[RMDB]
RNA sequence: GGGAACGACUCGAGUAGAGUCGAAAAUCUAUUUUUCAGUUAUACCUUUAGCUAAUAGGCAUAUUAAUCUUUGCUUAUGUCAAGAAGAGGUUCACAGUAGGUCUCCAUGACUGGCUUCCAACUGCCAUCACACCACUAGUUUCGACUAGUGGUGUGAAAAAGAAACAACAACAACAAC
Reactivity to DMS in 0.01 (KOAc 150mM, MgCl2 10mM, bicine 150mM(pH8.5), 24C), signal-to-noise 2, nucleotides 027 to 126: u000c040u000a050u010u010u010u000u010c120a070g020u010u010a090u020a100c030c010u000u010u010a130g020c060u000a050a020u000a010g030g000c020a020u010a080u000u030a070a080u020c210u010u000u000g000c010u000u000a020u000g010u010c170a040a060g000a110a040g010a060g010g030u000u000c120a040c100a060g000u000a020g030g010u000c000u000c060c080a090u010g000a040c150u000g000g000c060u000u000c140c120a060a080c130u000g000c040c040a080
Reactivity to 2A3 in 0.01 (KOAc 150mM, MgCl2 10mM, bicine 150mM(pH8.5), 24C), signal-to-noise 2, nucleotides 027 to 126: u010c010u000a060u010u120u030u060u060c040a010g040u040u170a090u090a130c010c000u030u030u080a030g030c030u050a060a010u050a060g030g000c030a020u040a080u160u220a110a100u140c110u030u040u030g000c000u050u030a040u080g120u090c020a050a000g080a040a010g040a060g010g000u060u120c060a030c000a050g070u100a040g000g090u020c050u000c060c020a060u160g060a040c050u030g000g000c000u130u040c020c000a010a000c060u060g020c000c020a030